[RMDB]
RNA sequence: GGGAACGACUCGAGUAGAGUCGAAAAUGCCGGGGGUAUUGCUGGCCCUUCGAUUUCCUCGGGCGGCUGCAGAGAGACUGACGCGGAAUCGCAGCGCCCUCCGGCACCGAGGCUCUUGAUCUCGGUGAUAAACGUCUCUAUUCGUAGAGACGUUUAUAAAAGAAACAACAACAACAAC
Reactivity to DMS in 0.01 (KOAc 150mM, MgCl2 10mM, bicine 150mM(pH8.5), 24C), signal-to-noise 5, nucleotides 027 to 126: u000g010c000c000g010g000g020g000g010u000a060u010u010g020c010u000g020g010c020c040c050u020u040c030g000a040u000u010u000c020c020u000c030g000g000g020c040g010g020c030u000g020c160a130g010a170g010a110g010a120c020u010g000a100c050g010c210g010g000a050a040u000c020g000c040a010g010c020g010c130c000c000u000c000c010g000g000c010a020c010c000g000a050g010g000c050u000c200u000u010g010a110u000c000u000c000g010g000u000g000